[RMDB]
RNA sequence: GGGAACGACUCGAGUAGAGUCGAAAAGAAGUGCCGUGGAUGACCUCUGGAGGCACAUACCUAAAAACCAAAACAGGCAUGAUGCAAGGGAUCUUACAUUUUACAUCUUCUCUGCUACACACACUACCGGAGUAUCAAUCUUCGGAUUGAUACUCCGAAAAGAAACAACAACAACAAC
Reactivity to 2A3 in 0.01 (KOAc 150mM, MgCl2 10mM, bicine 150mM(pH8.5), 24C), signal-to-noise 2, nucleotides 027 to 126: g040a150a020g020u030g010c020c030g090u160g000g030a060u150g040a040c050c030u000c000u050g100g000a200g070g000c000a010c010a020u040a020c000c000u050a100a120a100a040a040c070c030a050a070a020a010c040a000g020g000c000a020u090g050a070u110g070c000a000a060g060g050g040a010u010c020u020u160a070c030a240u100u140u120u090a040c040a040u030c000u080u000c010u000c010u020g040c040u080a020c030a000c010a000c000a020c100u090a060c020
Reactivity to DMS in 0.01 (KOAc 150mM, MgCl2 10mM, bicine 150mM(pH8.5), 24C), signal-to-noise 2, nucleotides 027 to 126: g000a260a150g010u000g030c050c000g000u010g000g000a070u000g020a130c300c090u000c040u020g020g020a260g030g000c010a050c020a030u000a020c020c000u010a060a050a050a140a060c170c200a030a030a070a050c140a040g010g000c010a080u020g000a060u010g020c080a140a060g000g030g000a090u020c060u050u000a050c100a010u000u000u010u000a140c190a080u000c020u000u020c010u000c000u000g010c050u010a090c030a050c060a050c060a040c160u010a150c080